[RMDB]
RNA sequence: GGGAACGACUCGAGUAGAGUCGAAAAGUCGCCGCGUCGACAUCAACGCCCAGCGCGGGCGAGGGAAGCGUCCUACGGGGGUGACCCAUUCGCCGGCAUGGGAGAGGACGGCAAGAUUGCCGCGACGGAGUAAUCGGGAUUUCGAUCCCGAUUACUCAAAAGAAACAACAACAACAAC
Reactivity to 2A3 in 0.01 (KOAc 150mM, MgCl2 10mM, bicine 150mM(pH8.5), 24C), signal-to-noise 2, nucleotides 027 to 126: g020u000c000g000c050c000g090c010g030u050c020g030a110c000a030u020c020a050a030c070g050c000c000c000a040g000c300g000c070g100g000g010c000g010a010g000g020g010a050a020g030c040g300u110c030c010u010a070c150g070g000g000g020g020u010g000a020c000c000c020a100u090u100c040g000c010c000g120g000c000a010u020g000g020g010a130g050a050g050g060a020c040g000g000c020a010a020g090a200u180u300g060c000c010g030c000g010a000c080g000
Reactivity to DMS in 0.01 (KOAc 150mM, MgCl2 10mM, bicine 150mM(pH8.5), 24C), signal-to-noise 2, nucleotides 027 to 126: g020u010c020g030c000c170g040c040g030u000c020g000a160c060a150u000c050a040a130c080g000c000c000c020a040g000c100g040c030g020g020g000c000g000a020g000g020g000a090a260g000c030g000u010c000c010u000a130c190g020g010g000g010g000u000g000a290c000c000c000a160u000u020c020g000c000c020g010g050c010a060u010g010g000g000a100g000a080g000g000a100c010g010g010c110a080a130g000a130u000u010g080c010c250g000c000g000a010c060g020